Record summary
Conditions: 150 mM KOAc, 10 mM MgCl2 and 150 mM bicine (pH 8.5), 24 C. The record gives the reactivity of an RNA of 177 nucleotides to 2A3 and DMS. For 2A3 the reverse transcriptase was SuperScript II with manganese. The 2A3 profile rests on 4,725 reads. For DMS, 1,196 sequencing reads were counted.

[RMDB]
RNA sequence: GGGAACGACUCGAGUAGAGUCGAAAACCCACUCCGCCCAGCACGGCCCCGCUUAAUGCGGCAAGGUCAGAUCCAAACAGCAUCUGAAAAAGCGCCGCACAAAGAAAUAGCCCCGCUAAAGGCGACAGUACAACAAAUUCUUCGGAAUUUGUUGUACAAAAGAAACAACAACAACAAC
Reactivity to 2A3 in 0.01 (KOAc 150mM, MgCl2 10mM, bicine 150mM(pH8.5), 24C), signal-to-noise 5, nucleotides 027 to 126: c000c000c000a010c030u050c040c020g020c010c010c000a010g020c020a010c030g020g010c000c000c000c040g020c010u060u140a080a030u130g000c000g020g000c010a060a020g120g040u010c000a000g000a010u040c040c040a130a110a230c030a100g020c030a010u000c010u010g040a040a000a010a060a030g140c070g000c010c000g000c010a010c030a010a130a010g050a010a090a010u060a040g020c000c000c000c010g000c050u070a140a050a010g040g000c010g010a010c020a020
Reactivity to DMS in 0.01 (KOAc 150mM, MgCl2 10mM, bicine 150mM(pH8.5), 24C), signal-to-noise 2, nucleotides 027 to 126: c020c000c000a120c100u020c010c010g000c000c030c070a080g000c060a070c260g030g000c020c010c040c000g060c000u010u020a090a190u000g010c000g020g000c030a160a170g000g010u000c020a060g000a000u020c030c030a060a290a120c180a170g000c230a010u020c010u000g010a040a040a040a120a190g010c300g000c000c050g020c000a020c130a090a110a080g020a010a040a040u000a120g000c010c000c190c070g020c160u020a040a090a050g010g000c000g000a070c150a020